[RMDB]
Overview: The record gives the reactivity of an RNA of 207 nucleotides to 2A3. The RNA was probed in 150 mM KOAc, 10 mM MgCl2 and 150 mM bicine (pH 8.5) at 24 C.
RNA sequence: GGGAACGACUCGAGUAGAGUCGAAAAGUCUCUUCACAACUGGAACUUCUCAAACAUCUAUUUUGUGAAAUGCCUUCCAUUAAGUUGGUCCAGGACUCAGAAGGUUUGGGUUCAUAGCCUUGUUUUUUCACUCACUUGCUAGUGAAACUUUAGCAAAGUGCAAAAUACGUUUCGACGUAUUUUGCACAAAAGAAACAACAACAACAAC
Reactivity to 2A3 in 0.01 (KOAc 150mM, MgCl2 10mM, bicine 150mM(pH8.5), 24C), signal-to-noise 2, nucleotides 027 to 156: g020u030c020u000c020u110u070c060a070c030a150a080c040u040g030g050a060a070c040u150u130c060u120c080a090a160a120c090a110u100c060u300a240u090u210u060u110g050u020g000a040a040a030u130g030c000c000u010u000c020c030a070u100u150a070a070g070u020u010g070g000u000c020c080a000g020g040a020c000u010c070a090g040a060a030g010g020u110u120u200g060g010g000u080u080c030a040u090a050g030c010c000u030u000g090u070u130u020u000u010u060c030a020c000u060c030a090c060u060u050g000c020u040a010g020u020g090a240a120a130c060u170u110u020a010g000c030a000a170a020